[RMDB]
RNA sequence: GGGAACGACUCGAGUAGAGUCGAAAACUCUUUUACUCGGCAUGAUACCACCGUUAUCGGGUCAACAGAGUAGUUGCAAAUGACAACAAUGCUCAGGGUUAUGCACUCGCUGCCUAAUGGCGGUGCGCGGACGACUCAAUGUUCGCAUUGAGUCGAAUAGAUGAGGCACAUUCGUGUGCCUCAUCUAAAAAGAAACAACAACAACAAC
Reactivity to 2A3 in 0.01 (KOAc 150mM, MgCl2 10mM, bicine 150mM(pH8.5), 24C), signal-to-noise 2, nucleotides 027 to 156: c010u000c000u000u200u070u100a230c240u150c060g000g000c020a040u100g000a010u080a050c000c000a030c010c000g150u010u020a050u100c040g010g000g000u020c010a020a040c100a050g010a000g030u040a040g020u050u060g010c160a160a190a300u270g070a240c020a010a000c000a000a130u070g000c000u030c030a020g000g040g020u100u190a050u150g010c000a010c010u240c080g010c010u060g020c050c080u120a220a040u300g020g040c000g000g000u010g000c050g010c000g100g010a070c000g000a000c000u000c000a020a000u020g020u100u010c070g000c070a000u000u000g010a000g000u000c020g010a000a060